[RMDB]
RNA sequence: GGGAACGACUCGAGUAGAGUCGAAAAAGCAGUACGGAACUGUGAUAACAUCUGUACGGUCAUUAGCUUACUUUCUUGAAACAAACCCAACUUAUAUCUCAGUACGUUUAAUGCCUGCUAUACAGACGCCGAAAGUCCGUUUCGACGGACUUUCGGCAAAAGAAACAACAACAACAAC
Reactivity to 2A3 in 0.01 (KOAc 150mM, MgCl2 10mM, bicine 150mM(pH8.5), 24C), signal-to-noise 1, nucleotides 027 to 126: a000g000c000a000g020u070a010c210g100g000a110a000c060u000g000u040g000a140u000a280a000c000a190u030c000u000g020u020a050c020g000g000u000c000a090u020u020a000g000c000u000u000a000c000u030u240u140c000u040u030g030a020a000a090c050a000a240a180c090c000c000a040a000c000u260u240a130u000a000u200c110u080c060a070g020u020a010c000g000u030u030u030a000a000u040g050c020c000u000g010c060u000a000u030a060c150a000g130a060c000
An RNA of 177 nucleotides, treated with 2A3 and read out base by base. Source: RMDB library OK1LIB, as collected in RNAgym. Values are in units of 0.01, from 0 to 300, in steps of 10. Conditions: 150 mM KOAc, 10 mM MgCl2 and 150 mM bicine (pH 8.5), 24 C.